Conditions: 150 mM KOAc, 10 mM MgCl2 and 150 mM bicine (pH 8.5), 24 C. This 177-nucleotide RNA was probed chemically with 2A3 and DMS. For DMS, 6,304 sequencing reads were counted. 2A3 adducts were read by reverse transcription with SuperScript II with manganese. Values cover nucleotides 27 to 126.
RNA sequence: GGGAACGACUCGAGUAGAGUCGAAAAGGACAGGGAGGAUCCAUGAGGUACCGGAUCUAGUAGGUACCAAGCUAGCUAUAUAUACGCUCGCUAGAAUAGAGCGUUACCGGAAACGGGACCUGUCCGACAUAGUCACGAUGUUCGCAUCGUGACUAUGAAAAGAAACAACAACAACAAC
Reactivity to 2A3 in 0.01 (KOAc 150mM, MgCl2 10mM, bicine 150mM(pH8.5), 24C), signal-to-noise 4, nucleotides 027 to 126: g000g000a000c010a000g010g030g030a090g080g050a050u030c030c000a080u150g080a050g040g040u020a010c000c020g020g040a080u070c040u070a060g080u070a040g010g050u010a030c010c010a020a010g020c020u040a000g000c040u040a030u010a010u010a010u010a300c020g000c000u000c020g020c030u040a040g090a300a160u100a080g010a010g000c010g000u010u030a030c010c020g020g030a080a060a010c010g030g000g000a010c000c000u000g000u000c010c000g000a000
Reactivity to DMS in 0.01 (KOAc 150mM, MgCl2 10mM, bicine 150mM(pH8.5), 24C), signal-to-noise 6, nucleotides 027 to 126: g010g010a020c000a020g020g000g020a160g010g020a110u000c030c030a140u010g020a220g010g020u010a040c030c010g000g010a150u000c080u000a070g000u010a090g000g000u000a050c060c050a070a060g010c090u000a050g010c070u010a060u000a110u010a100u000a030c080g010c010u010c030g020c150u010a120g010a100a130u020a110g010a020g010c010g010u000u010a030c020c010g010g000a050a090a140c040g010g010g000a060c000c000u000g010u000c000c000g010a150